RNA sequence: GGGAACGACUCGAGUAGAGUCGAAAACGGAAACCCCGGGAACAAGGAAACAGGAGGAGGAUCGGUAGAAAAGAGCGAGACCUCCGAUUCGAGAGCUCCUGGACUCCUCGGCUCUGGAGUCCUCCGAUCAGGCGGGCGUUCGCGCCCGCCAAAAGAAACAACAACAACAAC
Reactivity to 2A3 in 0.01 (KOAc 150mM, MgCl2 10mM, bicine 150mM(pH8.5), 24C), signal-to-noise 2, nucleotides 027 to 129: c020g000g160a050a000a000c050c040c040c030g000g000g010a030a010c000a060a020g080g000a020a030a020c000a000g050g000a000g030g000a080g000g040a000u040c010g000g020u080a010g030a020a150a050a000g070a080g000c070g020a000g090a130c000c000u090c020c020g060a050u000u040c030g060a030g000a060g200c000u000c000c000u010g070g000a040c000u020c000c000u010c000g040g000c000u030c000u100g030g000a040g050u030c000c050u000c010c030g010a070u030c000a000